RNA sequence: GGGAACGACUCGAGUAGAGUCGAAAAUGAGUCAUCGUGCGACAUGAUCAGGUACCCGAGGCUGUGCAACAUCGGUUUUCAGAGUCAUUGCAGUAAUAUCCCAGUCAUGGCAACCAUUUACUUGUAAAACGCAGUGGAUUUUCGAAUCCACUGCGUUAAAAGAAACAACAACAACAAC
Reactivity to DMS in 0.01 (KOAc 150mM, MgCl2 10mM, bicine 150mM(pH8.5), 24C), signal-to-noise 1, nucleotides 027 to 126: u000g010a100g000u000c030a090u000c060g030u000g000c030g020a100c030a070u000g010a090u000c050a050g000g060u010a090c080c040c030g010a120g000g000c030u000g040u020g010c160a110a110c080a040u020c100g020g000u000u010u020u020c110a070g000a060g000u000c030a080u000u000g000c050a040g000u000a000a080u000a110u010c000c000c000a110g010u000c110a040u000g000g010c020a090a030c030c040a120u000u000u000a060c100u000u000g030u020a110a030
An RNA of 177 nucleotides, treated with DMS and read out base by base. It was measured as part of the RMDB library OK2TST. Values cover nucleotides 27 to 126.